[RMDB]
RNA sequence: GGGAACGACUCGAGUAGAGUCGAAAAACGUGCCAUUUUGCACACAUUACUGCGUUGAGCACUCCAGUUAGGAAGGGAGGAAGGCAACGAACAGCAGUGACUCCUUCUCCAAAUAAGAUUACCAUCUAAGACAGAAAAACCAAAGGCUACCCACAAACAUUACUCCGGUCUUCGGACCGGAGUAAUGAAAAGAAACAACAACAACAAC
Reactivity to 2A3 in 0.01 (KOAc 150mM, MgCl2 10mM, bicine 150mM(pH8.5), 24C), signal-to-noise 2, nucleotides 027 to 156: a000c060g010u050g040c080c040a120u150u140u120u250g030c030a020c010a000c010a140u020u260a070c070u030g010c000g040u020u060g020a050g020c000a020c030u000c000c000a090g050u140u180a060g020g080a110a030g030g000g030a020g050g000a020a030g040g020c060a100a020c120g120a110a030c050a030g050c030a040g040u000g050a010c040u010c000c000u050u040c040u000c070c010a190a010a030u130a070a000g040a060u020u110a080c030c000a010u020c030u100a050a010g060a050c040a040g040a070a070a020a060a030c100c020a050a000a010g120g000c040u040a020c040c000c050a020c030a050a090a010
This 207-nucleotide RNA was probed chemically with 2A3. The RNA was probed in 150 mM KOAc, 10 mM MgCl2 and 150 mM bicine (pH 8.5) at 24 C. For 2A3 the reverse transcriptase was SuperScript II with manganese.